Structure probing data (DMS and 2A3) for a 177-nucleotide construct.
[RMDB]
RNA sequence: GGGAACGACUCGAGUAGAGUCGAAAAUUCAUUCUGCAUGAUGGCCCUCCUUAUGCGAAUGGCAGCAUUCAUAUUGGUCACUCGGUUAACAAGAUUCUGAAAGACAUUAUCGUGAAGUCCAAAGGGCCUCUUAGGCAUUGUUCGCAAUGCCUAAGAGAAAAGAAACAACAACAACAAC
Reactivity to DMS in 0.01 (KOAc 150mM, MgCl2 10mM, bicine 150mM(pH8.5), 24C), signal-to-noise 4, nucleotides 027 to 126: u010u020c050a070u010u010c050u010g020c060a040u010g010a060u000g020g000c020c020c040u000c110c100u000u000a040u000g010c050g010a050a030u000g010g030c230a090g020c060a050u000u000c100a050u000a100u010u020g010g010u000c030a080c110u000c100g010g020u000u010a050a070c130a060a090g000a140u000u000c050u000g000a080a090a130g000a050c070a040u000u010a050u000c090g030u010g010a060a070g010u000c020c050a030a080a110g000g000g000c090
Reactivity to 2A3 in 0.01 (KOAc 150mM, MgCl2 10mM, bicine 150mM(pH8.5), 24C), signal-to-noise 3, nucleotides 027 to 126: u030u010c000a030u080u010c010u150g040c040a020u050g030a020u050g100g000c040c020c020u090c050c010u120u070a040u040g050c020g020a020a010u050g040g000c060a000g020c000a020u070u110c020a010u110a050u220u080g050g000u050c000a010c030u010c020g060g020u030u040a050a020c040a090a020g050a170u100u070c050u080g100a120a040a010g040a040c050a070u110u090a020u110c030g010u030g110a060a030g030u050c020c000a110a020a040g010g030g010c030

Reactivities are given for positions 27 through 126.